[RMDB]
RNA sequence: GGGAACGACUCGAGUAGAGUCGAAAAUCUAAUACUCAACGACACGGACGAACAGAAACGCCUAGCCAUCGGAGUUAUCGGCCGGCAUUCGGCCAUCGCAAAAACUAUACUCGACAACAUUGACGAGGACGAAUCACUGCGUCUCGGCACCGUCAACUCUUACAAGCGAAUUCGUUCGCUUGUAAGAAAAAGAAACAACAACAACAAC
Reactivity to 2A3 in 0.01 (KOAc 150mM, MgCl2 10mM, bicine 150mM(pH8.5), 24C), signal-to-noise 4, nucleotides 027 to 156: u050c030u040a050a050u050a180c040u030c110a100a010c070g050a040c020a020c070g060g030a020c040g030a140a020c060a070g090a060a090a000c050g000c030c030u020a010g010c000c020a050u070c060g030g010a040g030u060u060a080u120c050g030g000c000c020g040g040c060a110u200u200c020g000g000c020c020a020u040c060g030c050a050a040a050a000a010c050u060a090u090a140c020u000c080g080a020c020a190a020c020a120u060u130g020a040c020g020a030g050g010a010c000g040a020a030u140c050a020c150u080g020c020g030u000c030u020c020g040g030c010a030c050c000g000u030c010a030a060c020
Reactivity to DMS in 0.01 (KOAc 150mM, MgCl2 10mM, bicine 150mM(pH8.5), 24C), signal-to-noise 1, nucleotides 027 to 156: u030c040u000a120a160u020a050c060u010c030a050a180c070g020a180c010a040c010g000g050a010c030g000a100a200c100a240g000a140a080a180c030g040c000c030u000a140g000c060c030a080u000c010g040g010a100g120u010u000a040u000c130g010g030c000c050g040g000c180a260u000u010c020g030g000c000c000a050u000c000g080c050a050a090a050a070a090c060u000a060u010a010c010u030c020g000a090c050a030a100c080a150u000u010g020a070c030g000a200g000g010a000c020g000a080a060u000c020a200c140u000g050c020g030u000c040u000c030g030g110c000a060c030c030g000u010c030a000a040c100

An RNA of 207 nucleotides, treated with 2A3 and DMS and read out base by base. For DMS the reverse transcriptase was MarathonRT. The 2A3 profile rests on 2,007 reads. Conditions: 150 mM KOAc, 10 mM MgCl2 and 150 mM bicine (pH 8.5), 24 C. 2A3 adducts were read by reverse transcription with SuperScript II with manganese. DMS (dimethyl sulfate) methylates the pairing face of unpaired adenines and cytosines.